[RMDB]
RNA sequence: GGGAACGACUCGAGUAGAGUCGAAAAUCUGCUGUAAAUGCUGCUAUGAUCAUGUUAUAGCAACUCCACAUAAGAUGGUUUUGUCUGUUUCUCCUUACGUUUGUAAUGCCCCUGGUUGUGGCGUUUCCUACAGUAUCCUUCGGGAUACUGAAAAGAAACAACAACAACAAC
Reactivity to DMS in 0.01 (KOAc 150mM, MgCl2 10mM, bicine 150mM(pH8.5), 24C), signal-to-noise 2, nucleotides 027 to 129: u020c040u030g020c100u040g020u020a020a020a020u030g030c070u000g040c000u040a050u000g030a080u030c180a120u060g030u050u000a000u010a050g000c010a020a060c040u030c130c300a060c000a000u000a100a030g030a060u030g000g000u030u010u050u000g010u030c090u040g020u020u000u040c000u000c080c010u050u010a110c050g040u000u000u000g040u030a060a050u030g010c000c000c000c000u020g010g000u000u070g030u030g000g000c160g030u000u000u000c010c010u050a300
Reactivity to 2A3 in 0.01 (KOAc 150mM, MgCl2 10mM, bicine 150mM(pH8.5), 24C), signal-to-noise 3, nucleotides 027 to 129: u000c010u020g000c060u060g090u100a000a090a090u100g020c030u000g000c030u000a010u110g080a050u120c030a000u240g070u100u070a020u000a000g020c000a010a020c070u040c030c010a060c030a060u080a090a010g220a300u130g000g000u000u000u000u110g000u020c060u000g000u000u030u000c050u090c060c140u030u150a090c020g230u090u070u130g170u040a080a050u120g040c000c000c000c000u030g050g030u060u000g000u010g020g020c010g070u040u020u000c010c000u020a010